Chemical mapping of a 177-nucleotide RNA with DMS and 2A3. The DMS profile rests on 1,223 reads.

[RMDB]
RNA sequence: GGGAACGACUCGAGUAGAGUCGAAAACAUUCGCUGCACCACGGCUGGUGUGCAGAAACGUUGAAUGCAGCAUAACGCACCCUUCACUAUCGCGAUCUAUCACAAACUGCACGUCGGGGUGGUCAACCGAGUAGGGAGCAUUCGUGCUCCCUACUCGAAAAGAAACAACAACAACAAC
Reactivity to DMS in 0.01 (KOAc 150mM, MgCl2 10mM, bicine 150mM(pH8.5), 24C), signal-to-noise 1, nucleotides 027 to 126: c140a170u000u000c090g000c120u000g060c010a010c050c000a000c000g010g010c010u000g000g010u000g090u160g000c020a000g000a010a180a150c170g000u000u020g000a070a040u000g010c160a000g000c000a100u040a070a080c210g100c080a060c000c000c000u140u000c040a050c030u040a130u060c040g000c000g000a040u000c000u050a050u000c030a080c050a060a070a060c020u020g000c000a000c050g000u000c010g010g000g000g020u000g020g000u040c060a070a060c160
Reactivity to 2A3 in 0.01 (KOAc 150mM, MgCl2 10mM, bicine 150mM(pH8.5), 24C), signal-to-noise 5, nucleotides 027 to 126: c020a050u140u150c050g030c100u040g010c030a010c020c000a030c020g170g030c070u020g030g040u060g020u030g080c000a000g050a120a070a000c070g060u040u140g060a080a050u070g020c010a020g000c020a070u100a210a030c050g010c020a090c030c010c000u050u090c060a090c080u090a120u090c030g020c020g070a030u040c020u120a050u110c020a010c040a080a040a090c060u010g000c010a020c020g010u040c020g010g010g010g000u000g030g000u010c010a030a040c040